RNA sequence: GGGAACGACUCGAGUAGAGUCGAAAAUUAGUGGAUUUAGAAACAGUAGCUAAUGCAUAAAUGAGUUGUAUUUUCUUAGAACGUUUUGGCUAUUCUAAGGUAGACAAAAUUUGGGUUUAAAAAAAGAUUCGCAUCCAUUAAAGUACAGAAAAUGGCCCUCUGUUUCUACUUUCGAGUAGAAACAGAGAAAAGAAACAACAACAACAAC
Reactivity to 2A3 in 0.01 (KOAc 150mM, MgCl2 10mM, bicine 150mM(pH8.5), 24C), signal-to-noise 1, nucleotides 027 to 156: u040u040a000g050u030g040g020a070u060u150u150a150g120a120a090a050c030a040g040u030a010g030c000u010a000a070u030g020c010a030u100a170a120a140u140g000a100g050u010u040g060u040a060u070u110u030u020c000u020u080a010g050a090a000c020g030u090u040u000u000g040g000c040u060a060u110u020c050u040a090a070g000g000u020a050g010a060c020a000a050a000a030u070u120u050g050g000g090u050u090u180a060a040a000a000a000a000a000g050a100u120u150c040g000c040a000u040c010c000a000u000u050a120a000a060g030u050a020c040a000g090a020a210a000a010u140g010g010c020c020